Chemical mapping of a 177-nucleotide RNA with DMS and 2A3. For 2A3 the reverse transcriptase was SuperScript II with manganese. The reactions ran in a buffer of 150 mM KOAc, 10 mM MgCl2 and 150 mM bicine (pH 8.5), at 24 C. Values are in units of 0.01, from 0 to 300, in steps of 10. Source: RMDB library OK1LIB, as collected in RNAgym. Reactivities are given for positions 27 through 126.
[RMDB]
RNA sequence: GGGAACGACUCGAGUAGAGUCGAAAAUCGGUGUCCAAUCCCCUGCUCGAACCUUCACAGAGAAGUUCAGCAACGGUGAAGACGUGCGCCCGGUUGUCCAGCGCAAUGACAGUCCGACAGGGCCUAAACCGUAGGUCUUCUUCGGAAGACCUACGGUAAAAGAAACAACAACAACAAC
Reactivity to DMS in 0.01 (KOAc 150mM, MgCl2 10mM, bicine 150mM(pH8.5), 24C), signal-to-noise 3, nucleotides 027 to 126: u020c030g010g010u020g030u000c000c020a180a080u010c000c040c250c120u010g000c000u000c040g020a030a010c080c050u000u000c000a180c300a120g000a170g030a020a050g010u000u000c000a000g010c000a090a150c300g000g010u010g000a030a100g000a100c050g050u000g000c020g000c040c040c050g000g000u000u000g010u010c030c000a060g000c120g000c040a090a030u000g000a170c070a130g020u050c010c060g030a080c250a040g020g030g030c020c050u030a050a160
Reactivity to 2A3 in 0.01 (KOAc 150mM, MgCl2 10mM, bicine 150mM(pH8.5), 24C), signal-to-noise 2, nucleotides 027 to 126: u080c070g020g000u080g000u100c000c010a020a020u000c000c000c000c000u000g000c010u020c070g060a040a040c060c000u030u010c000a040c030a100g300a000g000a150a000g000u010u070c040a000g020c000a040a080c040g060g000u050g090a070a010g010a000c020g070u110g000c060g040c000c050c060g120g010u050u140g000u060c030c000a070g020c060g000c150a120a010u080g010a050c030a000g040u050c000c000g040a010c050a120g010g030g060c000c000u150a200a140